[RMDB]
The record gives the reactivity of an RNA of 177 nucleotides to DMS and 2A3.
The data come from the RNA Mapping Database (RMDB), library OK1LIB.
The DMS profile rests on 22,615 reads.
The 2A3 profile rests on 5,021 reads.
Conditions: 150 mM KOAc, 10 mM MgCl2 and 150 mM bicine (pH 8.5), 24 C.
2A3 adducts were read by reverse transcription with SuperScript II with manganese.

RNA sequence: GGGAACGACUCGAGUAGAGUCGAAAAGCAUAGUUGUAGGAGUAGCGUGCCAACGGUACUCCUUAAUAGGAAACGAAGCAUGCAAGUGAAAAUGCUUGCGUUGGCAAGCCAAUACUGCAUAUGCGAACCCAUUUAAUUUGUUCGCAAAUUAAAUGGGAAAAGAAACAACAACAACAAC
Reactivity to DMS in 0.01 (KOAc 150mM, MgCl2 10mM, bicine 150mM(pH8.5), 24C), signal-to-noise 7, nucleotides 027 to 126: g010c090a090u020a090g000u010u000g020u000a010g000g000a040g010u020a040g020c000g020u000g010c170c200a100a030c000g000g020u010a030c040u000c000c000u000u010a020a030u030a060g010g000a070a070a050c040g010a090a080g020c020a020u010g000c030a050a110g020u000g010a130a050a150a090u020g000c000u000u000g010c000g000u060u020g000g010c000a020a020g000c010c080a090a110u020a040c000u000g010c000a040u010a060u030g000c040g010a080a120
Reactivity to 2A3 in 0.01 (KOAc 150mM, MgCl2 10mM, bicine 150mM(pH8.5), 24C), signal-to-noise 6, nucleotides 027 to 126: g050c030a030u090a090g090u050u130g050u060a020g010g040a060g010u030a000g170c030g010u060g150c020c040a090a030c030g040g040u080a040c000u030c000c000u010u010a020a030u050a020g020g050a010a130a010c090g010a100a030g010c010a010u060g030c060a190a200g010u120g090a110a120a040a030u120g010c000u010u010g040c020g070u110u120g120g000c000a000a000g000c010c010a080a050u070a080c010u000g000c020a010u060a040u100g010c030g030a070a070